[RMDB]
RNA sequence: GGGAACGACUCGAGUAGAGUCGAAAAGAUAUGGAAGAUGGCGUCGCAGGGACGAAUUCGGAAACGAACUAUCCCUGAACUACGACCCAUCUUCCUAAGUCAAAAGGUGGAAGUUCGCUUCCACCAAGUUCAUAAUGCCGUUCGCGGCAUUAUGAACAAAAGAAACAACAACAACAAC
Reactivity to DMS in 0.01 (KOAc 150mM, MgCl2 10mM, bicine 150mM(pH8.5), 24C), signal-to-noise 1, nucleotides 027 to 126: g000a010u000a300u010g000g000a000a000g010a000u000g010g000c300g010u000c010g010c000a040g000g000g010a000c090g000a090a100u000u000c000g000g010a060a110a170c000g010a020a060c070u000a230u000c000c000c000u000g010a030a060c080u010a300c000g000a000c020c000c000a010u000c000u000u010c000c000u000a000a030g010u010c000a070a050a100a100g000g010u000g000g000a050a040g030u010u020c230g030c030u000u000c000c000a010c000c030a000a010
Reactivity to 2A3 in 0.01 (KOAc 150mM, MgCl2 10mM, bicine 150mM(pH8.5), 24C), signal-to-noise 1, nucleotides 027 to 126: g000a010u040a030u050g000g020a000a000g000a030u000g000g060c250g030u020c010g000c060a020g000g030g000a020c010g080a080a250u080u010c000g000g000a020a010a010c000g000a030a000c020u040a080u060c000c010c000u000g010a180a050c130u090a050c040g010a000c000c000c000a010u010c000u020u000c000c000u010a000a000g020u010c000a030a040a000a180g000g020u000g010g030a020a030g010u060u200c220g090c170u020u000c020c010a020c000c000a000a020